[RMDB]
RNA sequence: GGGAACGACUCGAGUAGAGUCGAAAAGCGUCAUUGGUACUACAAAGUUCUACGGUGGCUGGGAUUUCAUGCUUAAAACAUUGUACAAAGAUGUUGAUAAUCCGCAUCUUAUGGGUUGGGAUUACCCCCAAUCACAAAAGUUCGCUUUUGUGAUUGGAAAAGAAACAACAACAACAAC
Reactivity to 2A3 in 0.01 (KOAc 150mM, MgCl2 10mM, bicine 150mM(pH8.5), 24C), signal-to-noise 3, nucleotides 027 to 126: g040c020g030u030c020a070u050u110g080g010u040a030c010u010a030c060a070a270a050g020u040u050c020u030a030c030g090g000u030g020g000c060u040g030g000g020a010u050u090u090c030a030u080g010c020u060u080a050a020a000a060c030a040u070u130g030u090a060c050a040a050a020g000a000u010g030u080u070g030a080u080a170a070u060c010c020g000c010a010u000c020u060u090a100u140g020g000g000u040u010g060g010g000a030u000u070a040c010c000c000
Reactivity to DMS in 0.01 (KOAc 150mM, MgCl2 10mM, bicine 150mM(pH8.5), 24C), signal-to-noise 3, nucleotides 027 to 126: g010c070g010u010c040a080u020u000g020g010u000a060c070u000a100c140a050a110a130g000u000u000c030u010a070c110g000g030u010g010g020c050u010g000g000g010a050u000u010u010c060a050u000g000c050u020u000a050a090a040a070c040a030u010u010g000u010a060c220a100a070a120g000a020u000g000u020u000g040a110u010a080a090u000c050c030g030c030a040u000c030u000u000a090u000g010g000g010u000u000g000g010g000a130u010u000a100c030c010c030